[RMDB]
This 177-nucleotide RNA was probed chemically with 2A3 and DMS. Values cover nucleotides 27 to 126. Conditions: 150 mM KOAc, 10 mM MgCl2 and 150 mM bicine (pH 8.5), 24 C. High DMS reactivity at an A or C suggests that its Watson-Crick edge is free. The DMS profile rests on 15,070 reads. Reactivities are rounded to 0.1 and cut off at 0 and 3. The data come from the RNA Mapping Database (RMDB), library TTRDEL. For 2A3, 30,063 sequencing reads were counted.
RNA sequence: GGGAACGACUCGAGUAGAGUCGAAAAGAUAUGGAUGUUGGGAGCUGCUCACCUCGGAAACGAGGUGACAGCGAGGAUCACGGCAUCCUAAGUCAAACUAGUUGAUAUCUUCGGAUAUCAACUAGAAGUUUAGUCUAAUGUUCGCAUUAGACUAAACAAAAGAAACAACAACAACAAC
Reactivity to 2A3 in 0.01 (KOAc 150mM, MgCl2 10mM, bicine 150mM(pH8.5), 24C), signal-to-noise 6, nucleotides 027 to 126: g020a000u080a020u150g010g000a000u000g010u030u030g040g030g040a080g010c030u030g000c040u030c000a000c000c010u000c010g020g050a060a080a040c010g010a010g000g000u000g000a000c000a000g000c010g000a010g020g060a070u110c050a020c120g020g000c000a000u000c000c000u010a120a020g050u040c050a060a030a110c010u000a000g000u000u010g000a000u020a010u000c020u050u090c300g050g010a000u000a000u000c000a000a000c000u000a010g000a010a010
Reactivity to DMS in 0.01 (KOAc 150mM, MgCl2 10mM, bicine 150mM(pH8.5), 24C), signal-to-noise 8, nucleotides 027 to 126: g010a040u000a300u000g000g010a010u000g010u000u000g000g010g010a130g010c000u000g010c270u000c000a000c000c000u000c000g000g010a100a060a210c010g010a010g010g020u010g000a010c020a000g010c010g000a060g020g010a210u000c050a100c040g010g000c010a010u000c000c000u010a030a100g000u000c040a090a130a300c000u000a000g000u000u000g000a010u000a000u000c000u000u010c230g000g000a010u000a000u000c000a000a000c000u000a000g000a050a080